[RMDB]
RNA sequence: GGGAACGACUCGAGUAGAGUCGAAAAGAUAUGGACAAUCUACCCACCCAGGUAGGGACAUGACCCAGCCGUAUGUCGGAAACGACAUAUGGCUGCAUGUCCCUACCUGGAGGAUUGUCCUAAGUCAUCUCACACUAACGUUCGCGUUAGUGUGAGAAAAAGAAACAACAACAACAAC
Reactivity to DMS in 0.01 (KOAc 150mM, MgCl2 10mM, bicine 150mM(pH8.5), 24C), signal-to-noise 2, nucleotides 027 to 126: g020a140u020a230u010g000g000a020c000a040a010u010c000u000a150c050c020c050a300c080c000c010a000g000g020u000a000g030g010g000a010c000a000u000g000a300c280c300c090a020g010c000c010g040u010a010u000g000u000c000g000g000a120a060a140c000g000a020c000a000u000a000u000g000g020c000u010g100c000a020u000g010u000c000c000c000u000a020c000c000u000g000g030a020g030g000a010u000u000g000u000c000c000u020a030a060g000u010c160a120
The record gives the reactivity of an RNA of 177 nucleotides to DMS. The data come from the RNA Mapping Database (RMDB), library TTRINS. The reactions ran in a buffer of 150 mM KOAc, 10 mM MgCl2 and 150 mM bicine (pH 8.5), at 24 C. The DMS profile rests on 1,253 reads. For DMS the reverse transcriptase was MarathonRT.